[RMDB]
About this RNA:
The record gives the reactivity of an RNA of 207 nucleotides to DMS and 2A3. Values cover nucleotides 27 to 156. Conditions: 150 mM KOAc, 10 mM MgCl2 and 150 mM bicine (pH 8.5), 24 C. The DMS profile rests on 2,829 reads. For 2A3, 2,216 sequencing reads were counted.
RNA sequence: GGGAACGACUCGAGUAGAGUCGAAAAGGAAACAACUACCAAAAGCGAAUCGGCAUGGGAAUGAUCUUUUGUGGGUCGAAAUUAGAAUGACAAUUCAGCUUAUGCGGUGAACUUGUUUUUCUUCACGACUGUUAUUGAACACGUCGAAACGUCAGGGCACCACAGAAGAUUUCGAUCUUCUGUGGUGAAAAGAAACAACAACAACAAC
Reactivity to DMS in 0.01 (KOAc 150mM, MgCl2 10mM, bicine 150mM(pH8.5), 24C), signal-to-noise 1, nucleotides 027 to 156: g020g010a110a050a030c020a110a060c010u000a140c010c020a050a140a100a100g040c030g030a030a130u010c000g010g000c030a090u000g020g020g000a120a130u000g020a040u000c030u000u000u000u020g030u030g010g030g010u000c010g000a050a070a080u000u020a100g000a000a040u010g010a060c030a020a040u000u010c000a110g020c020u000u000a070u000g010c140g030g000u000g000a030a070c120u010u020g030u000u000u020u000u020c000u000u000c030a100c030g020a030c030u000g000u000u010a140u020u000g010a090a110c080a010c090g000u000c040g000a090a030a080c040g010u000c060a170g000g010g000
Reactivity to 2A3 in 0.01 (KOAc 150mM, MgCl2 10mM, bicine 150mM(pH8.5), 24C), signal-to-noise 4, nucleotides 027 to 156: g080g010a070a070a010c060a010a050c050u140a070c030c010a040a060a060a030g020c020g030a070a020u020c020g020g000c020a020u040g020g000g080a040a080u060g050a030u040c080u060u200u150u140g110u200g120g020g020u040c020g020a080a060a000u060u020a030g010a050a000u020g010a010c010a010a000u010u000c020a040g050c050u120u140a090u300g090c100g090g010u040g020a000a000c030u000u000g040u000u010u000u020u020c000u050u070c070a030c020g010a010c000u060g040u230u070a050u060u130g090a040a000c010a000c050g010u010c020g000a060a020a000c030g010u030c050a040g010g000g060